The record gives the reactivity of an RNA of 177 nucleotides to 2A3 and DMS. For 2A3, 947 sequencing reads were counted. Conditions: 150 mM KOAc, 10 mM MgCl2 and 150 mM bicine (pH 8.5), 24 C. For 2A3 the reverse transcriptase was SuperScript II with manganese. Source: RMDB library OK1LIB, as collected in RNAgym.
RNA sequence: GGGAACGACUCGAGUAGAGUCGAAAAGCACGUCCGGCAAGGCCCGUGCGAACACUUGAGCUCCGGAUUGGCCGCUCUUGUGGAUUAGGACGUUCUAGCUCCGGCUUGGCCGCUAGUUCGUCCGAAACAGUGAUCGGCAUUUCGAUGCCGAUCACUGAAAAGAAACAACAACAACAAC
Reactivity to 2A3 in 0.01 (KOAc 150mM, MgCl2 10mM, bicine 150mM(pH8.5), 24C), signal-to-noise 2, nucleotides 027 to 126: g000c000a000c020g000u000c000c000g060g120c170a090a120g070g000c050c140c000g000u020g000c030g000a050a000c000a000c010u000u020g020a000g000c020u110c010c020g000g260a240u190u170g250g040c030c010g010c000u000c000u000u020g010u020g020g020a050u080u250a060g020g000a000c000g020u010u000c000u000a010g000c020u090c120c020g070g030c120u130u190g140g040c000c000g000c030u000a000g000u000u000c000g030u000c000c000g000a000a000a000
Reactivity to DMS in 0.01 (KOAc 150mM, MgCl2 10mM, bicine 150mM(pH8.5), 24C), signal-to-noise 1, nucleotides 027 to 126: g030c000a050c020g000u020c000c040g000g040c120a300a090g000g000c190c180c010g000u000g070c030g000a150a060c010a020c050u000u000g000a050g000c030u100c000c010g060g040a160u030u040g000g000c240c140g020c020u000c000u000u050g030u000g000g000a080u100u090a130g000g000a000c040g050u000u000c040u000a000g050c090u030c100c100g030g020c090u030u000g060g020c090c230g000c030u000a000g000u000u000c050g040u000c000c000g030a100a020a060